[RMDB]
RNA sequence: GGGAACGACUCGAGUAGAGUCGAAAAGACGCGAGAGACGCGAGACGCGCAAUGGCAGAAGCCGCAAUAGAUCAUACGACGCAAGAGGCAAGACGGAGAGCGCGCAACUUGCAUCAAUAACCAAGAACGCGAUUAAUCGGUUCGCCGAUUAAUCGCGAAAAGAAACAACAACAACAAC
Reactivity to 2A3 in 0.01 (KOAc 150mM, MgCl2 10mM, bicine 150mM(pH8.5), 24C), signal-to-noise 1, nucleotides 027 to 126: g000a030c000g000c010g070a040g000a000g030a120c050g000c090g060a050g020a180c060g020c000g020c000a020a020u080g010g000c010a000g000a300a000g150c000c050g000c040a040a000u010a060g080a040u110c080a060u180a220c050g010a050c020g010c040a030a030g090a130g110g000c020a200a000g140a020c110g040g000a130g000a030g070c030g000c000g000c000a000a000c000u040u000g000c000a000u030c010a000a230u000a130a050c010c000a100a100g030a130a060